[RMDB]
RNA sequence: GGGAACGACUCGAGUAGAGUCGAAAAGAUAUGGAGACGAACUACAGACGAAGUGGCGAAGAACUCGGAAACGAGGGAGCCAUUUUUGUCUGCGUCUCCUAAGUCAAAACGCCUGUUCGCAGGCGAACCUUAAAAUCGGGUUCGCCCGAUUUUAAGGAAAAGAAACAACAACAACAAC
Reactivity to DMS in 0.01 (KOAc 150mM, MgCl2 10mM, bicine 150mM(pH8.5), 24C), signal-to-noise 3, nucleotides 027 to 126: g020a020u000a300u010g000g000a030g000a020c000g020a070a080c110u020a300c020a000g000a010c010g000a020a020g030u000g000g010c010g000a130a140g010a160a170c000u000c000g010g010a120a040a140c010g000a040g010g010g000a060g000c000c010a000u000u000u000u000u020g000u010c000u010g000c030g000u000c000u010c000c000u000a010a050g020u010c020a040a050a120a200c060g030c040c010u000g010u010u010c160g020c020a010g020g010c000g000a010a030
Reactivity to 2A3 in 0.01 (KOAc 150mM, MgCl2 10mM, bicine 150mM(pH8.5), 24C), signal-to-noise 3, nucleotides 027 to 126: g000a020u080a020u140g010g000a010g040a000c010g000a060a080c120u250a060c300a010g000a000c010g000a000a010g000u020g010g040c020g140a300a030g030a090a070c010u000c000g030g040a060a090a040c010g010a010g000g000g020a010g020c020c000a020u160u110u020u010u160g000u000c000u000g000c000g000u020c000u000c000c000u010a010a010g000u000c020a030a040a060a100c010g000c020c000u000g010u120u080c300g000c110a000g010g000c000g000a020a020